[RMDB]
RNA sequence: GGGAACGACUCGAGUAGAGUCGAAAAGAUAUGGAAACUGGGACACUGACUAGGCGUUGAAAUCGGAAACGAUGGAGCCUACUCAGUCGCCAGUUUCCUAAGUCGCGCCUUGUCUUCGGACAAGGAAGUCAGAGAUAGUGUUCGCACUAUCUCUGACAAAAGAAACAACAACAACAAC
Reactivity to DMS in 0.01 (KOAc 150mM, MgCl2 10mM, bicine 150mM(pH8.5), 24C), signal-to-noise 4, nucleotides 027 to 126: g000a040u000a300u000g000g000a020a010a000c000u010g000g010g010a230c080a040c020u000g010a020c080u000a010g000g000c000g020u010u020g000a070a130a030u010c020g010g000a100a080a190c000g010a020u000g000g010a170g020c000c000u000a000c180u000c000a010g010u000c240g000c010c010a010g000u000u000u000c000c000u010a010a070g000u000c010g000c250g000c000c000u000u010g000u000c010u000u000c230g020g000a020c000a000a010g000g000a020a030
Reactivity to 2A3 in 0.01 (KOAc 150mM, MgCl2 10mM, bicine 150mM(pH8.5), 24C), signal-to-noise 1, nucleotides 027 to 126: g020a000u060a010u110g000g000a020a000a000c000u020g020g000g120a100c010a000c080u010g020a010c010u000a020g010g030c020g260u300u030g010a040a020a000u010c010g000g040a060a060a050c010g000a010u030g010g030a000g000c000c000u000a000c010u000c000a000g030u020c010g010c000c000a000g000u010u000u000c000c000u000a010a010g000u000c010g010c010g000c030c000u010u020g000u000c010u040u050c290g150g000a000c000a000a010g000g000a020a040